[RMDB]
Structure probing data (2A3 and DMS) for a 177-nucleotide construct. Conditions: 150 mM KOAc, 10 mM MgCl2 and 150 mM bicine (pH 8.5), 24 C.
RNA sequence: GGGAACGACUCGAGUAGAGUCGAAAAAUAAGCUCGGUGAAGUCGUGCGAAGCACACCCUAACGCUUAAUGGCGAGGAAAGAUUCGUAGAGGUACGGGUUGUGUGUGACAGUGCGGGUGGGGUUGCCGCCCGCAUAUACGUUCGCGUAUAUGCGGGCAAAAGAAACAACAACAACAAC
Reactivity to 2A3 in 0.01 (KOAc 150mM, MgCl2 10mM, bicine 150mM(pH8.5), 24C), signal-to-noise 4, nucleotides 027 to 126: a000u110a050a000g010c010u010c050g060g060u110g080a100a040g080u050c020g040u020g010c010g030a030a010g000c020a010c010a020c010c000c000u010a090a020c010g000c010u040u120a090a020u150g010g000c010g000a010g000g040a090a050a010g040a040u040u010c010g010u030a030g020a090g220g110u040a010c010g010g010g000u040u030g020u020g010u020g010u010g020a030c060a080g020u020g050c040g020g010g060u110g050g020g010g000u040u060g030c020c010
Reactivity to DMS in 0.01 (KOAc 150mM, MgCl2 10mM, bicine 150mM(pH8.5), 24C), signal-to-noise 5, nucleotides 027 to 126: a100u010a090a120g020c040u000c030g030g010u000g010a100a100g010u010c050g020u000g020c030g020a130a230g010c020a040c050a060c030c010c010u000a080a070c030g010c010u000u010a110a080u010g000g010c010g000a080g010g010a120a110a060g000a050u000u000c030g030u000a040g010a140g010g000u000a020c030g000g000g000u010u000g010u000g020u000g010u000g010a080c090a200g000u000g010c040g010g000g020u000g000g000g000g000u000u000g020c090c080

The DMS profile rests on 7,489 reads. For 2A3, 6,187 sequencing reads were counted. DMS adducts were read by reverse transcription with MarathonRT. Values are in units of 0.01, from 0 to 300, in steps of 10.